[RMDB]
RNA sequence: GGGAACGACUCGAGUAGAGUCGAAAAACGUUGAUAUGGAUUUACUCCGAGGAGACGAACUACCACGAACAGGGGACACUCUACCCGUGGCGUCUCCGUUUGACGAGUAAGUCCGAAGUCAACAUGCAAACCCGGAUCUUCGGAUCCGGGAAAAGAAACAACAACAACAAC
Reactivity to DMS in 0.01 (KOAc 150mM, MgCl2 10mM, bicine 150mM(pH8.5), 24C), signal-to-noise 2, nucleotides 027 to 129: a140c050g070u010u010g000a030u040a000u120g040g000a060u000u000u070a010c000u010c090c050g000a100g000g030a080g070a020c010g100a130a000c190u100a290c040c000a000c020g010a090a300c100a000g000g000g000g000a190c300a090c000u000c030u040a190c140c010c000g030u030g000g060c080g000u010c090u010c040c030g000u010u000u240g000a270c300g000a000g010u000a000a050g030u000c000c000g000a050a130g030u000c000a000a000c040a090u000g000c100a010a000a080
Reactivity to 2A3 in 0.01 (KOAc 150mM, MgCl2 10mM, bicine 150mM(pH8.5), 24C), signal-to-noise 2, nucleotides 027 to 129: a000c030g030u000u000g000a000u000a110u270g030g000a000u000u000u000a030c000u000c020c030g040a030g010g000a000g020a000c000g070a070a020c080u130a070c100c030a000c010g010a040a020c030a070g000g000g000g050a040c090a110c170u000c010u010a040c010c000c060g000u000g000g000c000g000u000c000u000c040c000g000u050u050u050g020a000c000g050a000g000u000a000a000g040u000c010c020g010a040a000g040u000c000a000a000c000a020u050g010c040a090a100a040